Annotation
Structure probing data (2A3 and DMS) for a 207-nucleotide construct. The DMS profile rests on 1,359 reads. DMS (dimethyl sulfate) methylates the pairing face of unpaired adenines and cytosines. Conditions: 150 mM KOAc, 10 mM MgCl2 and 150 mM bicine (pH 8.5), 24 C. The data come from the RNA Mapping Database (RMDB), library OK3TST.

RNA sequence: GGGAACGACUCGAGUAGAGUCGAAAAUAAAACAUUUGAACCUGGUCUAGAAUAUGCUGACCUAGAGGAAAACAAGCAUAUUGAUGAUUCUUCAAGGAAGUUCAGAUGUCUGACUUCAAUUAGACAUGUGAUUAGAAAAAAUAAAAACUGGACAGGACAUCGCUAAAUGGUUCGCCAUUUAGCGAUGAAAAGAAACAACAACAACAAC
Reactivity to 2A3 in 0.01 (KOAc 150mM, MgCl2 10mM, bicine 150mM(pH8.5), 24C), signal-to-noise 2, nucleotides 027 to 156: u120a010a030a030a010c040a090u120u070u260g090a030a030c000c010u050g050g130u000c000u010a010g050a070a050u070a060u080g030c010u010g070a100c020c010u020a050g030a100g090g060a040a100a030a000c060a040a020g000c050a050u050a040u090u040g030a030u010g010a030u020u070c010u090u060c100a070a010g060g000a030a010g090u030u010c000a010g010a130u020g050u020c000u000g010a020c010u070u030c080a020a090u040u000a010g020a020c000a010u080g010u020g140a040u040u200a020g040a050a100a020a010a010a020u160a040a040a000a000a000c000u010g000g000a020c000a000g000g030a020
Reactivity to DMS in 0.01 (KOAc 150mM, MgCl2 10mM, bicine 150mM(pH8.5), 24C), signal-to-noise 1, nucleotides 027 to 156: u000a070a080a010a070c040a170u010u040u000g040a050a120c010c010u040g080g050u000c070u000a190g000a070a060u000a000u000g000c090u000g000a140c030c070u020a130g050a110g040g000a070a050a070a080c090a180a170g020c010a070u000a010u000u010g040a110u010g010a230u020u000c000u000u010c040a080a140g000g060a200a130g000u000u000c040a050g000a050u000g010u000c000u000g040a060c070u010u000c220a100a080u000u000a010g020a080c010a070u010g010u000g000a040u000u040a260g000a000a000a000a120a090a240u000a100a000a010a060a060c030u000g110g020a040c060a030g060g010a240